[RMDB]
RNA sequence: GGGAACGACUCGAGUAGAGUCGAAAAGAUUCCUCGUUGUUGAGCGAGGUUUAAACAAAUCGACCACACAAACGUAGAGCCGACUACGGAUUUAUAAAUUAAGGCAUUAAGUGUGAUAAGCAGACAAAAAACGAUGUUGUGUUCGCACAACAUCGAAUCAUUACUAUAUGUUCGCAUAUAGUAAUGAAAAAGAAACAACAACAACAAC
Reactivity to 2A3 in 0.01 (KOAc 150mM, MgCl2 10mM, bicine 150mM(pH8.5), 24C), signal-to-noise 9, nucleotides 027 to 156: g080a100u170u120c000c000u000c000g000u000u010g010u010u010g010a000g000c000g000a000g020g000u050u100u040a020a020a010c050a000a000a010u000c000g010a010c000c000a000c000a000c000a030a180a020c010g000u000a000g000a010g010c000c010g050a020c010u000a000c010g000g010a000u020u300u030a170u140a070a020a010u130u140a010a000g000g010c000a010u130u220a160a070g000u000g010u000g010a020u050a060a030g080c070a010g080a240c160a070a150a030a030a020a020c010g000a000u000g000u000u000g010u000g020u030u060c180g040c070a000c000a000a000c000a000u000c000g000a000a010
Reactivity to DMS in 0.01 (KOAc 150mM, MgCl2 10mM, bicine 150mM(pH8.5), 24C), signal-to-noise 4, nucleotides 027 to 156: g010a300u000u010c000c000u000c070g010u000u000g020u000u000g000a110g030c040g000a060g030g010u000u010u010a040a090a120c100a070a060a120u000c030g020a070c020c030a050c020a160c030a150a110a080c020g010u000a040g000a170g020c000c020g040a080c010u000a030c000g020g000a260u000u000u000a040u010a030a040a060u000u000a030a070g010g010c030a280u000u010a050a130g010u000g020u000g000a070u000a050a110g010c050a100g020a110c080a000a060a070a070a120a150c020g000a020u000g020u000u010g040u010g020u000u000c300g000c000a030c000a000a010c000a000u000c000g010a030a070
Source: RMDB library M2RFPK, as collected in RNAgym.
The record gives the reactivity of an RNA of 207 nucleotides to 2A3 and DMS.
The reactions ran in a buffer of 150 mM KOAc, 10 mM MgCl2 and 150 mM bicine (pH 8.5), at 24 C.
For DMS the reverse transcriptase was MarathonRT.